[RMDB]
RNA sequence: GGGAACGACUCGAGUAGAGUCGAAAAACUUUGUGGAGAUGGACGACGGCGAGAAGGUCUGCUCCUUUGAGCUGCUCGACUGCAAACCCCUGGGCAGCAUGGCCCCGGGACGCAAGGGCAAAAAGAGGAAUCUGAUCUUAUUCGUAAGAUCAGAUUCAAAAGAAACAACAACAACAAC
Reactivity to 2A3 in 0.01 (KOAc 150mM, MgCl2 10mM, bicine 150mM(pH8.5), 24C), signal-to-noise 4, nucleotides 027 to 126: a010c030u060u030u030g030u050g050g070a160g060a210u110g040g020a020c020g010a000c020g030g030c020g000a030g000a050a000g030g020u060c130u170g030c100u100c000c000u000u020u020g010a010g000c010u000g010c070u010c010g050a070c020u010g000c020a040a050a300c030c010c000c010u010g000g000g000c010a110g050c080a160u150g180g000c000c000c010c010g000g000g020a000c010g000c010a020a020g030g020g000c020a030a060a060a020a030g200a050g170
Reactivity to DMS in 0.01 (KOAc 150mM, MgCl2 10mM, bicine 150mM(pH8.5), 24C), signal-to-noise 6, nucleotides 027 to 126: a070c060u010u010u000g020u010g000g000a150g010a120u000g010g010a130c030g010a070c050g010g000c010g000a300g000a060a050g010g010u010c140u020g020c160u010c010c050u000u010u000g010a300g000c030u000g010c160u000c020g010a110c060u000g000c060a070a110a150c220c010c000c010u000g000g010g010c000a160g010c190a090u000g020g000c010c000c010c110g000g000g010a090c060g010c020a030a040g000g000g000c110a040a040a050a040a070g000a160g020